[RMDB]
RNA sequence: GGGAACGACUCGAGUAGAGUCGAAAAAUGAGUCUAGCGUCGGAUCGUACUCUGGAUCAUCCAUGCUGAUCUCACUAGGAUCCGUACUCAUCAUGUCGAUCCGCGAUGGUACCGUACGGAUCGUACGUGAUGCAUAGUACUUCGGUACUAUGCAUCAAAAAGAAACAACAACAACAAC
Reactivity to 2A3 in 0.01 (KOAc 150mM, MgCl2 10mM, bicine 150mM(pH8.5), 24C), signal-to-noise 9, nucleotides 027 to 126: a000u060g000a010g030u030c060u170a020g040c020g090u070c100g030g020a040u040c060g060u090a050c040u040c090u230g080g040a080u060c010a010u000c060c020a050u110g000c030u030g020a070u050c030u020c050a040c080u060a050g080g070a000u000c000c010g000u010a010c030u040c030a050u010c020a040u120g080u120c050g030a070u040c050c030g020c050g030a020u050g030g070u080a110c070c040g010u020a010c010g000g010a010u010c010g030u050a030c050g050
Reactivity to DMS in 0.01 (KOAc 150mM, MgCl2 10mM, bicine 150mM(pH8.5), 24C), signal-to-noise 9, nucleotides 027 to 126: a060u010g000a040g010u000c070u010a050g030c090g010u000c090g030g000a030u000c080g020u010a050c070u010c130u010g010g000a080u000c080a060u010c070c090a090u000g020c160u000g000a050u010c010u000c060a050c120u000a070g000g010a010u000c000c010g020u000a020c020u000c040a030u000c070a060u000g010u000c070g010a060u000c080c040g020c090g000a040u000g000g010u000a120c250c100g010u000a030c010g000g000a010u000c000g010u010a020c170g010